[RMDB]
RNA sequence: GGGAACGACUCGAGUAGAGUCGAAAAGUUUACAGUAUGAGUUAGGUAGUGGUGAACAUCAUAUGUGUAUUUAAACCAAACUAUUAAUUUAGUGACCUUCAAAAUAACACAGACUAAAUACAUUAGGAUUCUGAUUCGAAUUCGUUCGAAUCAGAAUAAAAGAAACAACAACAACAAC
Reactivity to DMS in 0.01 (KOAc 150mM, MgCl2 10mM, bicine 150mM(pH8.5), 24C), signal-to-noise 2, nucleotides 027 to 126: g010u010u020u000a090c020a100g030u000a030u000g010a090g000u020u000a040g000g010u010a040g030u000g020g000u000g000a050a090c030a090u000c090a050u010a070u000g010u000g000u000a040u000u010u020a040a100a180c030c030a060a130a070c030u010a010u000u000a070a080u020u010u000a000g000u000g000a130c080c050u000u000c140a040a050a020a090u000a050a060c040a060c060a040g000a120c080u000a030a050a030u000a040c100a080u000u000a110g020g000
Reactivity to 2A3 in 0.01 (KOAc 150mM, MgCl2 10mM, bicine 150mM(pH8.5), 24C), signal-to-noise 1, nucleotides 027 to 126: g020u080u030u050a080c000a000g000u040a070u070g040a040g020u110u090a090g000g070u020a050g080u100g070g080u050g010a050a020c010a120u010c020a040u130a010u070g120u040g040u080a020u020u120u060a040a000a020c000c000a040a110a000c000u020a000u090u030a120a090u130u110u040a000g030u050g010a020c040c010u110u090c130a060a010a170a240u180a140a020c040a000c020a080g100a020c000u000a100a050a050u040a060c050a050u090u080a060g020g030